[RMDB]
RNA sequence: GGGAACGACUCGAGUAGAGUCGAAAAACGGCGGUACGCCGCCGAAACAGGGCUCUGACCUAUGAAUUGACAGCCAGUGCUCUCGUCUCCCCUCUGGCUGCCAAUUCCAUAGGUCACAGGUAUGUAACUUUACCGUACUGUUCGCAGUACGGUAAAGAAAAGAAACAACAACAACAAC
Reactivity to DMS in 0.01 (KOAc 150mM, MgCl2 10mM, bicine 150mM(pH8.5), 24C), signal-to-noise 4, nucleotides 027 to 126: a080c000g010g010c000g000g010u020a070c190g050c000c000g010c020c010g000a030a060a070c130a050g010g010g020c030u010c200u000g000a000c010c000u000a000u000g000a040a010u000u000g000a030c020a010g000c000c000a020g010u000g000c170u060c170u020c080g000u000c120u000c010c000c000c010u000c000u000g000g000c000u000g030c020c000a010a000u000u000c060c040a000u000a000g000g000u000c000a010c160a040g000g000u030a100u000g000u000a070a150
Reactivity to 2A3 in 0.01 (KOAc 150mM, MgCl2 10mM, bicine 150mM(pH8.5), 24C), signal-to-noise 4, nucleotides 027 to 126: a000c010g000g020c010g010g000u060a040c220g040c040c000g030c010c010g010a030a000a000c070a030g080g080g030c000u030c010u040g000a010c000c000u010a000u000g000a000a000u000u000g000a010c000a000g000c010c000a010g010u040g080c070u080c070u070c200g030u010c040u030c020c000c000c000u010c000u000g000g000c000u000g010c000c010a010a000u000u030c080c000a000u000a010g000g000u000c000a000c010a000g000g020u120a050u180g100u040a050a020

Source information:
Structure probing data (DMS and 2A3) for a 177-nucleotide construct. 2A3 adducts were read by reverse transcription with SuperScript II with manganese.